[RMDB]
RNA sequence: GGGAACGACUCGAGUAGAGUCGAAAAAGUUGAUAGAAGAAUGUAGAUAAGGGAAGUCGGCAAAAUAGAUCCGUAACUUCGGGAAAAGGAUUGGCUCUGAGGGUUGGGCCUAGGGGUCUUUUUGGAGGAAGUGAACAUGAUUCGUCAUGUUCACUUCAAAAGAAACAACAACAACAAC
Reactivity to DMS in 0.01 (KOAc 150mM, MgCl2 10mM, bicine 150mM(pH8.5), 24C), signal-to-noise 4, nucleotides 027 to 126: a070g000u000u000g010a070u020a050g010a140a090g000a060a080u040g010u020a080g000a120u020a060a110g000g000g010a060a040g010u000c050g010g020c120a040a040a080a120u030a070g010a070u020c010c000g000u020a070a120c070u010u010c060g000g010g000a040a070a070a090g000g000a060u010u010g000g010c040u010c030u010g000a120g000g000g010u010u000g030g010g000c030c040u010a110g000g010g010g020u010c010u010u020u010u010u000g000g000a280g000
Reactivity to 2A3 in 0.01 (KOAc 150mM, MgCl2 10mM, bicine 150mM(pH8.5), 24C), signal-to-noise 3, nucleotides 027 to 126: a010g120u140u090g060a100u070a080g010a070a030g010a050a020u090g010u170a010g040a070u090a080a130g030g020g000a030a010g040u070c010g010g000c050a050a040a000a040u230a040g040a020u060c010c010g020u020a020a120c030u020u070c050g000g010g030a050a140a040a020g060g000a060u050u110g000g020c010u000c030u080g040a140g060g100g010u140u120g040g000g020c000c020u020a020g050g000g000g000u080c000u020u070u010u010u040g040g000a080g030